Structure probing data (DMS and 2A3) for a 177-nucleotide construct.
The 2A3 profile rests on 895 reads.
The RNA was probed in 150 mM KOAc, 10 mM MgCl2 and 150 mM bicine (pH 8.5) at 24 C.
For 2A3 the reverse transcriptase was SuperScript II with manganese.
The DMS profile rests on 1,152 reads.
For DMS the reverse transcriptase was MarathonRT.

RNA sequence: GGGAACGACUCGAGUAGAGUCGAAAAACCUCCAUGCUGAAUGAAGAGGCCACACGAGGAUGCUCACACUGCUCAGUGCUUCUUAGAGAAAGCUGCUGGCUCUGAUUAGGUCUGGUAGGGGGCAGGGCGCAAUCACGACAUUCGUGUCGUGAUUGCGAAAAGAAACAACAACAACAAC
Reactivity to DMS in 0.01 (KOAc 150mM, MgCl2 10mM, bicine 150mM(pH8.5), 24C), signal-to-noise 1, nucleotides 027 to 126: a100c000c010u000c020c040a090u000g020c070u000g000a130a070u020g000a090a110g000a060g040g000c040c030a060c140a070c120g020a040g010g000a030u010g000c100u000c090a120c060a070c090u000g000c050u010c080a130g010u010g010c050u000u000c040u000u000a070g000a130g000a090a060a070g010c010u000g010c050u000g010g000c010u010c030u000g000a140u010u010a110g020g000u000c040u020g010g020u000a050g040g010g020g010g000c080a020g010g000g020
Reactivity to 2A3 in 0.01 (KOAc 150mM, MgCl2 10mM, bicine 150mM(pH8.5), 24C), signal-to-noise 1, nucleotides 027 to 126: a000c010c000u000c000c000a110u060g030c000u060g070a090a170u030g030a070a000g080a070g100g000c000c000a030c000a010c050g020a030g130g000a080u070g040c010u050c030a180c000a030c050u100g000c000u050c120a000g000u030g100c010u020u070c020u080u110a100g060a020g050a150a100a020g020c070u070g090c000u010g030g000c010u000c000u020g070a090u080u200a020g000g040u020c050u090g120g000u090a090g000g060g000g030g050c000a040g000g020g070